[RMDB]
RNA sequence: GGGAACGACUCGAGUAGAGUCGAAAAGAUAUGGACCCGAGCUCGAUAAGCGACUCGGAAACGAGAAUCGCUUUUGACGAGCGAGGGUCCUAAGUCAAAUCCCCAAUACGUUCGCGUAUUGGGGAAACCACUAUAAAGCCUUCGGGCUUUAUAGUGGAAAAGAAACAACAACAACAAC
Reactivity to 2A3 in 0.01 (KOAc 150mM, MgCl2 10mM, bicine 150mM(pH8.5), 24C), signal-to-noise 1, nucleotides 027 to 126: g020a010u060a000u080g010g010a000c000c000c000g010a020g010c020u000c020g170a180u030a260a000g000c020g010a020c000u000c010g020g010a020a010a000c000g010a000g050a100a300u050c050g020c000u040u040u050u080g230a040c000g000a000g000c010g000a000g000g010g000u000c010c000u000a000a000g020u030c010a000a040a100u020c000c000c000c010a010a000u010a000c010g020u040u110c280g000c010g200u000a010u000u000g000g000g030g000a000a020a020
Reactivity to DMS in 0.01 (KOAc 150mM, MgCl2 10mM, bicine 150mM(pH8.5), 24C), signal-to-noise 2, nucleotides 027 to 126: g000a040u000a300u000g000g000a000c010c000c000g000a300g010c000u020c000g000a210u010a020a030g000c020g010a040c020u000c000g010g000a040a040a120c000g010a000g010a060a150u000c000g010c000u000u010u010u010g010a240c080g010a000g020c000g000a300g010g000g020u000c000c000u000a000a080g030u000c050a060a110a230u000c000c000c000c010a000a000u000a020c000g000u000u000c270g030c030g010u000a000u000u000g000g000g010g000a000a000a040